[RMDB]
RNA sequence: GGGAACGACUCGAGUAGAGUCGAAAAAGCUGCUGCUGGCGCUGGGGCUGGCCCCCGUUAGGCGUGCGUCCGCAUUCGCUGCGCCCCGAAGACCAAUGGGCCCACGGCGCCAAGUUGGCCCAGCCUGCGUCGGAGUAGGUUUCGACCUACUCCGACGAAAAGAAACAACAACAACAAC
Reactivity to 2A3 in 0.01 (KOAc 150mM, MgCl2 10mM, bicine 150mM(pH8.5), 24C), signal-to-noise 2, nucleotides 027 to 126: a000g060c030u060g000c000u020g020c000u000g030g030c020g000c000u040g000g030g050g000c050u140g020g000c010c000c000c000c000g000u050u280a040g050g000c030g000u020g000c010g020u070c160c060g010c140a110u110u100c010g000c020u070g040c020g000c000c000c000c000g050a110a010g020a090c040c010a080a170u170g070g100g030c050c010c000a180c060g080g000c010g000c000c000a050a000g040u080u150g050g000c060c020c000a000g000c000c020u050g020